[RMDB]
RNA sequence: GGGAACGACUCGAGUAGAGUCGAAAAACAUCAAAGUAAAGUUUCGGCAGGUGAAGCAAAACUUGAGAAGACUAUAGCAGUGGCAGCACUUAUCAUGAUGAUAUUUGAUUCUGAGCGCAGCGAUUACAGCCUUAUGCAUAUUCGUAUGCAUAAGGCUAAAAGAAACAACAACAACAAC
Reactivity to DMS in 0.01 (KOAc 150mM, MgCl2 10mM, bicine 150mM(pH8.5), 24C), signal-to-noise 3, nucleotides 027 to 126: a070c100a100u010c090a140a060a120g010u000a050a100a090g020u000u010u010c060g010g010c040a030g010g030u000g010a050a060g000c060a050a050a070a050c050u000u010g020a140g020a110a110g000a080c090u000a050u000a080g010c040a070g010u000g000g020c040a040g000c050a030c050u010u000a060u000c020a050u010g000a070u020g020a040u010a040u010u000u010g000a080u000u000c040u000g000a070g020c080g020c070a060g000c030g010a090u000u010a100c190
Reactivity to 2A3 in 0.01 (KOAc 150mM, MgCl2 10mM, bicine 150mM(pH8.5), 24C), signal-to-noise 1, nucleotides 027 to 126: a000c000a060u080c020a050a030a030g100u140a150a110a000g030u000u030u080c000g030g060c030a050g000g150u070g100a060a070g020c030a080a120a000a020c030u080u050g040a020g000a150a040g010a060c070u020a030u080a170g060c020a010g010u030g060g110c030a010g000c050a040c030u060u070a010u050c080a080u110g260a080u130g040a010u050a070u180u070u080g090a150u130u000c050u070g010a060g020c020g010c070a060g000c010g090a030u130u210a150c050